An RNA of 207 nucleotides, treated with 2A3 and read out base by base. It was measured as part of the RMDB library RNAMAK. Reactivities are given for positions 27 through 156. For 2A3, 2,939 sequencing reads were counted. Reactivities are rounded to 0.1 and cut off at 0 and 3.

[RMDB]
RNA sequence: GGGAACGACUCGAGUAGAGUCGAAAAACCUUUGUGUGUUACGAUGUUGAUUGAUGACCUACACGUAACAUCACGCCCAUUGGGCGUGUGGUGUAGCAAGAUCAACUAGUAACACACUCUGGUAAAAUCGCGACGGUCGUUCGCGACCGUCGCGAAACGUCUAAGUAAUCUUCGGAUUACUUAGACGAAAAGAAACAACAACAACAAC
Reactivity to 2A3 in 0.01 (KOAc 150mM, MgCl2 10mM, bicine 150mM(pH8.5), 24C), signal-to-noise 3, nucleotides 027 to 156: a000c000c000u000u030u000g010u000g010u000g000u000u000a010c020g010a090u230g020u010u010g010a010u010u020g100a150u080g060a120c040c010u020a000c020a000c000g150u230a220a090c050a120u150c010a020c000g000c050c000c050a300u240u300g010g000g000c010g000u000g000u020g050g000u000g000u000a000g030c090a190a190g010a010u000c000a010a000c000u000a030g000u000a000a000c000a000c000a000c000u000c000u000g000g010u040a070a010a010a180u040c000g000c000g000a000c000g020g040u010c000g030u050u160c140g030c000g020a000c000c000g000u000c000g000c020g000a010a000a000